[RMDB]
RNA sequence: GGGAACGACUCGAGUAGAGUCGAAAAACAACCGCGGCUGGUAACAAAAAAAUCGCCUUGUCGUCUCAUGCCUACGAUGGGCUAAAGAAGCACUGUGGCGAAACAUGCACUGGGUGGCCAUUGCGUCAGCACCCCCACAAUUCGUUGUGGGGGUGCUAAAAGAAACAACAACAACAAC
Reactivity to DMS in 0.01 (KOAc 150mM, MgCl2 10mM, bicine 150mM(pH8.5), 24C), signal-to-noise 1, nucleotides 027 to 126: a050c110a050a160c110c000g040c040g000g010c000u000g000g000u060a040a050c130a000a010a010a090a120a070a090u000c050g000c050c030u000u000g000u000c150g000u000c000u030c140a190u080g000c030c000u000a070c060g010a050u040g000g000g000c000u000a140a070a030g000a190a010g000c040a050c070u000g070u020g000g000c000g020a000a020a020c060a030u020g020c020a030c020u020g010g000g000u020g030g000c040c010a050u000u000g000c030g000u050c190
Reactivity to 2A3 in 0.01 (KOAc 150mM, MgCl2 10mM, bicine 150mM(pH8.5), 24C), signal-to-noise 2, nucleotides 027 to 126: a000c100a060a020c010c000g010c020g040g000c020u000g040g060u170a050a090c110a060a060a000a000a020a020a120u090c000g040c000c000u010u030g050u060c040g070u010c000u000c000a050u160g040c010c010u090a120c080g160a140u300g040g000g000c000u060a050a120a000g040a040a000g040c070a000c060u060g010u040g020g000c000g010a020a050a090c080a060u140g000c060a000c010u010g010g000g050u020g040g010c000c010a030u030u130g000c000g070u020c000